[RMDB]
RNA sequence: GGGAACGACUCGAGUAGAGUCGAAAAUUUCAAUUGGUGGAUUGCAGGAAUACCACUUGUCCCCAGAUUCAUUUUAUAGACACAGAAAAGUGGUAAUGAAUUAGAUUAUGGUGGUGUUCCAUAAUCAGCAUGAUUCUUCAUUCGUGAAGAAUCAUGCAAAAGAAACAACAACAACAAC
Reactivity to DMS in 0.01 (KOAc 150mM, MgCl2 10mM, bicine 150mM(pH8.5), 24C), signal-to-noise 2, nucleotides 027 to 126: u010u010u000c110a070a130u010u000g030g020u010g020g000a050u000u000g030c240a090g010g000a030a000u000a010c010c000a020c000u000u000g000u020c020c000c060c050a300g000a020u000u010c000a010u000u000u010u000a230u010a130g000a190c020a020c020a100g010a090a120a080a090g000u000g000g000u010a030a010u000g000a020a010u010u010a060g000a050u000u000a100u010g000g030u000g010g000u000g020u000u010c000c000a090u000a050a040u000c050a110
Reactivity to 2A3 in 0.01 (KOAc 150mM, MgCl2 10mM, bicine 150mM(pH8.5), 24C), signal-to-noise 2, nucleotides 027 to 126: u020u050u060c010a000a040u080u130g130g000u080g180g030a020u040u080g040c080a040g060g000a000a030u030a010c000c010a000c000u010u100g030u030c040c000c000c020a020g010a010u000u000c000a010u010u010u070u090a160u030a080g160a080c000a010c030a010g300a300a230a140a070g040u030g010g020u050a020a000u010g040a020a000u040u020a010g030a090u090u090a100u270g030g050u000g030g000u020g000u000u030c000c000a000u030a010a040u040c030a000
Structure probing data (DMS and 2A3) for a 177-nucleotide construct. The reactions ran in a buffer of 150 mM KOAc, 10 mM MgCl2 and 150 mM bicine (pH 8.5), at 24 C. For 2A3, 1,127 sequencing reads were counted. It was measured as part of the RMDB library OK2TRN. For DMS the reverse transcriptase was MarathonRT.